[RMDB]
RNA sequence: GGGAACGACUCGAGUAGAGUCGAAAACGAGAUUCGUCCACGUCACCAUGAGUUAAAAUUUAACUCGCAGAUUCACUCCUGAGUUAAACUUUUACUGGGAGUUAAAUUUUAACUCAUGGUGACGUGGCUGACGAGAAUAGUUCGCUAUUCUCGUCAGAAAAGAAACAACAACAACAAC
Reactivity to 2A3 in 0.01 (KOAc 150mM, MgCl2 10mM, bicine 150mM(pH8.5), 24C), signal-to-noise 1, nucleotides 027 to 126: c060g040a010g030a110u110u130c030g020u040c020c020a040c020g000u000c010a000c030c010a000u000g010a000g000u020u010a000a040a020a030u030u000u000a000a000c000u000c040g180c040a030g040a270u110u110c010a020c080u100c040c080u120g060a040g050u030u120a130a230a180c050u070u100u120u300a070c010u030g000g070g040a000g000u010u010a000a000a000u000u000u000u000a000a000c000u010c000a000u000g000g050u010g000a000c000g000u000g000g000
Reactivity to DMS in 0.01 (KOAc 150mM, MgCl2 10mM, bicine 150mM(pH8.5), 24C), signal-to-noise 2, nucleotides 027 to 126: c030g010a230g020a190u000u020c060g010u010c000c000a010c010g010u000c000a010c010c000a000u010g010a010g000u000u000a000a000a040a000u000u000u000a000a010c000u000c000g010c000a000g000a300u010u000c120a090c110u020c160c190u000g000a050g000u000u010a090a050a180c150u010u010u000u010a120c020u000g000g010g010a020g000u000u000a000a020a000u000u000u010u010a000a000c000u000c000a000u000g000g010u010g000a000c000g020u000g000g000

Source information: Chemical mapping of a 177-nucleotide RNA with 2A3 and DMS. As a SHAPE reagent, 2A3 marks flexible, mostly unpaired nucleotides at the ribose 2'-OH. The RNA was probed in 150 mM KOAc, 10 mM MgCl2 and 150 mM bicine (pH 8.5) at 24 C.